[RMDB]
RNA sequence: GGGAACGACUCGAGUAGAGUCGAAAAUCCUUUAUUGGGGGGUACACUCGAGGAGUGGAAGGCGGGUAGGGGGGACCCCAGGGUCAACCUACGGAAAUCCCUGAGUUCCUCGGAUGUCCAGGCCGUCGACCCAUCCGGUUCGCCGGAUGGAAAAGAAACAACAACAACAAC
Reactivity to 2A3 in 0.01 (KOAc 150mM, MgCl2 10mM, bicine 150mM(pH8.5), 24C), signal-to-noise 4, nucleotides 027 to 129: u050c020c040u060u120u070a220u120u110g000g010g000g010g010g000u020a030c020a050c040u030c000g050a050g050g040a040g030u080g030g150a030a030g010g030c060g050g020g030u060a050g010g000g000g010g060g010a020c000c010c020c020a040g010g010g000u010c010a060a070c000c010u070a000c040g030g020a100a090a050u070c000c000c000u020g050a040g020u030u030c000c000u000c020g030g000a000u030g000u020c000c000a010g030g080c020c000g040u060c040g040a050c010
Reactivity to DMS in 0.01 (KOAc 150mM, MgCl2 10mM, bicine 150mM(pH8.5), 24C), signal-to-noise 4, nucleotides 027 to 129: u010c010c010u000u000u010a060u020u060g000g000g000g000g000g000u030a100c090a030c020u010c070g000a100g020g000a030g050u000g000g000a140a060g000g050c200g000g000g000u040a040g020g000g000g020g020g030a040c020c010c050c080a080g010g020g050u090c040a070a100c050c030u040a070c120g040g000a040a060a080u040c040c000c070u030g020a190g010u010u000c040c030u010c030g050g030a040u040g010u080c000c080a120g000g040c000c030g050u050c070g010a050c040
Structure probing data (2A3 and DMS) for a 170-nucleotide construct. 2A3 is a SHAPE reagent: it acylates the 2'-hydroxyl of flexible nucleotides of all four kinds. Values cover nucleotides 27 to 129. Source: RMDB library 15KLIB, as collected in RNAgym. The reactions ran in a buffer of 150 mM KOAc, 10 mM MgCl2 and 150 mM bicine (pH 8.5), at 24 C. The 2A3 profile rests on 7,005 reads.